An RNA of 177 nucleotides, treated with DMS and 2A3 and read out base by base. Reactivities are given for positions 27 through 126. The data come from the RNA Mapping Database (RMDB), library TTRDEL. The RNA was probed in 150 mM KOAc, 10 mM MgCl2 and 150 mM bicine (pH 8.5) at 24 C. DMS adducts were read by reverse transcription with MarathonRT. For DMS, 742 sequencing reads were counted.

[RMDB]
RNA sequence: GGGAACGACUCGAGUAGAGUCGAAAAGAUAUGGAGCUACUACCCACCGGUGCGACGAAGUUCGUCGGAAACGACGAACAGAGCAUUUCGAGGUAGCUCCUAAGUCAAAGUCAGCUUCGGCUGACAAGUAGUCGAACUGGUUCGCCAGUUCGACUACAAAAGAAACAACAACAACAAC
Reactivity to DMS in 0.01 (KOAc 150mM, MgCl2 10mM, bicine 150mM(pH8.5), 24C), signal-to-noise 1, nucleotides 027 to 126: g050a110u020a160u000g000g030a020g010c010u010a000c000u020a010c060c020c010a300c080c080g030g000u000g000c000g020a270c200g000a130a100g000u000u000c000g000u000c010g000g000a080a080a080c000g020a000c000g050a030a000c000a080g000a050g000c020a010u000u000u040c000g000a140g000g010u000a030g020c000u010c000c000u000a050a080g060u000c210a130a210a130g050u000c020a000g020c030u000u070c190g010g000c000u000g010a000c030a000a000
Reactivity to 2A3 in 0.01 (KOAc 150mM, MgCl2 10mM, bicine 150mM(pH8.5), 24C), signal-to-noise 1, nucleotides 027 to 126: g150a060u220a200u300g000g000a000g020c040u020a010c020u090a120c040c010c020a040c000c050g020g030u010g000c190g010a300c060g030a300a070g040u010u020c000g000u010c000g000g020a070a080a010c030g010a000c000g000a030a000c000a010g000a010g000c040a030u200u230u300c040g000a060g000g060u000a000g000c010u000c010c010u000a040a010g000u010c180a110a130a060g000u000c000a000g000c020u030u280c300g210g000c010u000g000a000c010a000a020